The record gives the reactivity of an RNA of 207 nucleotides to 2A3. The reactions ran in a buffer of 150 mM KOAc, 10 mM MgCl2 and 150 mM bicine (pH 8.5), at 24 C. The data come from the RNA Mapping Database (RMDB), library OK3TST.

RNA sequence: GGGAACGACUCGAGUAGAGUCGAAAACUUUUAGGUACGAAUUUGGUCAGGCUCUCUUCACUGGCUGGGCUGCUGCUUCUCUCUGCCUUCUGGGAGGUGCCCUACUUUGCUGUUCCUGUCCCCGAAAAACAACCUCUUACCCAACACCAAGGCCCUAGGGAGGAUAAGUAUUCGUACUUAUCCUCCCAAAAGAAACAACAACAACAAC
Reactivity to 2A3 in 0.01 (KOAc 150mM, MgCl2 10mM, bicine 150mM(pH8.5), 24C), signal-to-noise 1, nucleotides 027 to 156: c010u110u070u070u250a080g030g000u050a040c020g040a110a040u060u050u140g040g000u030c060a030g000g100c030u000c000u000c000u100u100c040a040c040u010g080g000c010u030g010g050g020c020u040g010c020u040g010c030u110u010c000u030c000u000c020u050g060c020c000u060u050c120u080g000g020g000a050g000g030u040g000c010c000c010u040a090c010u050u040u060g040c010u050g040u070u050c030c000u020g080u010c030c030c000c000g030a050a030a050a000a000c030a000a060c020c010u020c010u020u070a050c000c010c000a000a020c020a020c190c010a020a010g300g020c020c020c010u270a020